[RMDB]
RNA sequence: GGGAACGACUCGAGUAGAGUCGAAAACUCGAUUUCGUCAAUGCGGGAGGUGCCCCAUUGACAAAUUGUGUUAAGAUGCUUACUCCUAAAACUGGUACAGGUAUAGCUAUAUCUGUUAAACCAGAGAUACGUUCGAUCUUCGGAUCGAACAAAAGAAACAACAACAACAAC
Reactivity to DMS in 0.01 (KOAc 150mM, MgCl2 10mM, bicine 150mM(pH8.5), 24C), signal-to-noise 5, nucleotides 027 to 129: c050u000c010g020a010u000u010u030c220g020u000c020a010a000u030g010c040g000g000g000a300g100g100u100g030c070c010c020c000a030u000u020g000a050c000a010a010a000u010u040g030u030g030u030u030a070a240g030a100u040g000c030u030u040a120c110u030c040c050u050a080a050a080a160c050u020g010g020u000a000c040a020g040g000u020a000u050a040g070c160u090a020u000a020u030c030u040g010u000u000a040a020a030c010c000a030g040a090g000a140u000a090c120
Reactivity to 2A3 in 0.01 (KOAc 150mM, MgCl2 10mM, bicine 150mM(pH8.5), 24C), signal-to-noise 8, nucleotides 027 to 129: c000u000c020g010a010u010u020u040c080g000u010c010a010a000u030g030c160g040g000g020a210g250g160u300g140c000c000c000c010a000u000u000g000a010c000a000a010a000u010u010g020u000g030u020u030a100a030g060a120u150g050c040u070u110a090c040u080c040c030u050a070a050a040a070c000u000g010g000u000a010c000a000g000g000u000a020u020a040g120c190u110a020u000a010u010c010u010g000u040u090a100a040a000c000c000a010g000a000g010a000u110a100c080